[RMDB]
RNA sequence: GGGAACGACUCGAGUAGAGUCGAAAAUUAGUUUUUUGUACCCAGUUUAAGAAUACCUUUAUCAUGUGAUUCUAAAGUAUCCAGAGAAUAUCUGUAUGCUUUGUAUACCUAUGGUUAUGCAUAAAAAGAGUUAUGCAAUUUUCGAAUUGCAUAACUCAAAAGAAACAACAACAACAAC
Reactivity to DMS in 0.01 (KOAc 150mM, MgCl2 10mM, bicine 150mM(pH8.5), 24C), signal-to-noise 5, nucleotides 027 to 126: u020u030a130g000u000u030u000u000u010u000g010u010a130c020c010c010a180g020u010u020u020a080a120g000a130a060u010a060c080c040u010u000u010a050u010c060a060u010g010u010g000a080u000u000c020u030a010a010a010g010u000a000u000c030c000a010g000a030g010a130a090u050a030u010c000u000g010u000a010u000g000c000u010u000u000g000u010a040u000a030c180c020u000a050u000g000g000u010u000a040u010g010c110a070u010a030a060a110a090a130
Reactivity to 2A3 in 0.01 (KOAc 150mM, MgCl2 10mM, bicine 150mM(pH8.5), 24C), signal-to-noise 5, nucleotides 027 to 126: u090u030a060g130u060u030u030u030u060u160g040u080a050c000c000c000a020g010u060u090u090a140a070g050a040a050u170a140c020c020u090u140u010a040u090c010a030u040g050u060g110a040u030u010c050u180a000a010a000g010u020a010u020c130c000a000g010a010g060a190a080u160a090u300c010u000g000u020a000u000g010c000u030u000u000g000u000a010u010a020c000c010u030a030u040g000g000u020u040a050u140g050c130a090u130a190a090a000a000a010
This 177-nucleotide RNA was probed chemically with DMS and 2A3. For DMS the reverse transcriptase was MarathonRT. It was measured as part of the RMDB libraries RFM100 and RFMREP. 2A3 adducts were read by reverse transcription with SuperScript II with manganese. The reactions ran in a buffer of 150 mM KOAc, 10 mM MgCl2 and 150 mM bicine (pH 8.5), at 24 C.